[RMDB]
An RNA of 177 nucleotides, treated with DMS and read out base by base.

RNA sequence: GGGAACGACUCGAGUAGAGUCGAAAAAUAAACCACCACCAGCGCGACCUGGUCCACCACGAGCUGGUCGGCGGCCUCGCGCGCUCCCGCCACCACCGCGACCACCUCCUCGCGCACGUACAAAAAACACGGAUAGAGAGUUCGCUCUCUAUCCGUGAAAAGAAACAACAACAACAAC
Reactivity to DMS in 0.01 (KOAc 150mM, MgCl2 10mM, bicine 150mM(pH8.5), 24C), signal-to-noise 1, nucleotides 027 to 126: a090u020a040a080a170c020c070a200c090c070a110c020c130a090g010c050g060c050g000a050c040c090u010g000g000u020c020c110a020c090c040a070c040g000a140g010c110u020g010g020u000c200g130g010c070g000g010c050c080u000c050g000c030g020c050g000c080u000c040c040c050g000c070c040a110c010c050a050c030c010g010c070g000a020c040c100a070c080c000u000c030c010u000c070g020c060g020c020a060c050g000u000a030c110a020a020a180a030a090a070
It was measured as part of the RMDB library M2PK90. For DMS, 475 sequencing reads were counted.